[RMDB]
RNA sequence: GGGAACGACUCGAGUAGAGUCGAAAAGCCCGUAGCUUCGGCGGAGUCUGCGCGAUGGGCGACCCGGAAAGGCCGGAAGCGGCCGGGCUGGAUCAGGAUGAGAGAUCAUCUUCAGACACCAACGAAAGUUUUCAUUCCAGUUCGCUGGAAUGAAAACAAAAGAAACAACAACAACAAC
Reactivity to 2A3 in 0.01 (KOAc 150mM, MgCl2 10mM, bicine 150mM(pH8.5), 24C), signal-to-noise 4, nucleotides 027 to 126: g020c000c000c000g020u060a010g000c040u070u070c020g020g000c010g010g050a080g020u000c060u160g030c070g010c050g180a200u160g050g120g000c020g020a050c040c000c000g020g090a170a170a050g100g000c010c010g050g050a070a040g050c000g000g030c050c020g000g000g000c020u040g000g030a070u070c020a040g010g010a020u020g010a040g010a010g010a060u020c000a000u010c000u050u010c010a020g010a040c030a030c080c040a040a040c050g080a050a080a020
Reactivity to DMS in 0.01 (KOAc 150mM, MgCl2 10mM, bicine 150mM(pH8.5), 24C), signal-to-noise 2, nucleotides 027 to 126: g000c000c030c000g060u040a080g000c050u010u000c040g030g010c270g000g000a160g000u000c000u000g000c210g030c030g000a130u030g000g000g000c010g020a080c090c010c000g000g030a020a090a150g050g010c000c000g000g040a160a130g010c000g000g000c100c020g010g000g050c010u010g000g010a160u020c060a060g020g010a040u000g000a000g010a170g000a170u000c010a010u000c000u010u000c070a060g000a020c060a130c010c020a010a300c010g000a010a170a080
This 177-nucleotide RNA was probed chemically with 2A3 and DMS. 2A3 adducts were read by reverse transcription with SuperScript II with manganese. Reactivities are rounded to 0.1 and cut off at 0 and 3. It was measured as part of the RMDB library OK1LIB. The 2A3 profile rests on 2,544 reads. For DMS, 1,851 sequencing reads were counted.